[RMDB]
RNA sequence: GGGAACGACUCGAGUAGAGUCGAAAACAGACGUCCACUUUUUGAUGAAAAGGUGGACACUACAUCACCAAUACAAGUUUAAUGGCUACAUACGGCACUCAGUUUACACUUACAUUACAUAUGCAUUCCUCGGACGGAUGUUCGCAUCCGUCCGAGGAAAAGAAACAACAACAACAAC
Reactivity to 2A3 in 0.01 (KOAc 150mM, MgCl2 10mM, bicine 150mM(pH8.5), 24C), signal-to-noise 1, nucleotides 027 to 126: c000a020g030a090c030g000u000c000c000a000c000u010u030u020u030u030g300a300u300g050a020a020a020a020g020g000u030g090g000a000c000a000c000u000a000c000a150u030c000a000c190c040a060a000u150a300c170a140a000g000u000u000u060a080a020u030g050g000c000u000a000c000a140u050a000c000g000g000c000a000c000u000c080a080g000u110u040u000a000c110a000c000u140u000a020c000a000u000u240a080c120a140u290a000u160g010c000a000u000u000